[RMDB]
RNA sequence: GGGAACGACUCGAGUAGAGUCGAAAAUGCCACUAUUCCUAGUUGUGAAUAUGAUGGGAACACAAUCUCAGGCUUUAAGAGGAUGAUGGCAACACGAGAUUCAUUUCAGUCAUUUAACAUUAGUGAACCGAUAAUGAUGGUUCGCCAUCAUUAUCGGAAAAGAAACAACAACAACAAC
Reactivity to 2A3 in 0.01 (KOAc 150mM, MgCl2 10mM, bicine 150mM(pH8.5), 24C), signal-to-noise 2, nucleotides 027 to 126: u060g050c010c000a030c070u110a100u100u050c010c000u010a050g090u050u210g010u010g050a070a030u070a050u110g110a000u020g000g110g020a040a000c050a010c030a040a010u000c010u000c030a030g120g000c010u070u200u110a060a000g050a020g240g020a010u140g010a030u090g030g000c000a040a030c080a020c090g060a030g020a010u000u040c010a000u020u000u050c020a020g020u020c000a020u060u000u080a080a030c020a030u010u080a020g050u010g110a050a070
Reactivity to DMS in 0.01 (KOAc 150mM, MgCl2 10mM, bicine 150mM(pH8.5), 24C), signal-to-noise 4, nucleotides 027 to 126: u000g020c040c010a140c120u000a100u000u010c020c000u000a100g020u010u010g040u000g030a120a070u010a010u020g000a090u010g010g030g000a050a070c140a110c220a060a050u000c020u000c010a130g020g010c060u000u000u000a110a050g010a080g020g010a040u000g000a060u000g010g010c000a030a100c120a080c150g010a060g010a040u010u000c070a140u000u000u000c070a130g010u000c040a020u000u000u010a100a020c100a100u000u000a040g010u000g000a050a130